Conditions: 150 mM KOAc, 10 mM MgCl2 and 150 mM bicine (pH 8.5), 24 C. Chemical mapping of a 207-nucleotide RNA with 2A3 and DMS. DMS adducts were read by reverse transcription with MarathonRT.

RNA sequence: GGGAACGACUCGAGUAGAGUCGAAAAGCCGAUGAAUUGCCGAUAAGCCUGGCUCGAAAUCGUCGACGCAUCGACGACGGUCCUGCCAUGAGACCGUAACGAGGACAUGUCGCCUCGAAUGGCGUCGUAUAACAUGAGUGGUUCGCCACUCAUGUAAUGCCCAAGAUGAAUUCGUUCAUCUUGGGCAAAAAGAAACAACAACAACAAC
Reactivity to 2A3 in 0.01 (KOAc 150mM, MgCl2 10mM, bicine 150mM(pH8.5), 24C), signal-to-noise 2, nucleotides 027 to 156: g050c010c020g010a040u060g050a070a280u090u080g050c000c010g050a060u030a110a000g010c030c060u090g030g010c000u000c000g090a090a090a020u060c040g050u030c010g030a090c080g050c160a110u030c020g010a010c000g010a010c000g020g000u010c000c030u060g050c040c010a020u050g030a000g010a090c020c010g000u050a040a000c020g000a010g010g010a000c040a170u210g050u150c120g040c020c000u010c000g010a010a010u010g030g060c010g010u010c030g000u040a140u050a220a030c000a000u000g000a000g000u000g000g000u020u030c060g100c030c000a000c000u000c000a000u000g000u000a000a000
Reactivity to DMS in 0.01 (KOAc 150mM, MgCl2 10mM, bicine 150mM(pH8.5), 24C), signal-to-noise 1, nucleotides 027 to 156: g040c000c030g000a090u000g010a090a080u000u010g020c020c010g010a080u000a070a210g020c000c010u010g010g030c040u000c040g010a090a070a050u000c030g000u000c000g000a080c150g000c120a080u010c000g000a020c000g010a020c000g000g000u000c000c000u000g000c050c280a130u000g000a120g010a030c030c010g030u000a030a110c050g010a080g080g010a070c030a090u000g010u000c030g020c000c000u000c020g000a070a090u000g020g010c030g030u020c030g000u000a070u000a130a030c010a000u000g030a000g000u000g060g050u000u010c300g010c020c000a030c000u000c000a000u000g000u000a030a090
The DMS profile rests on 3,153 reads.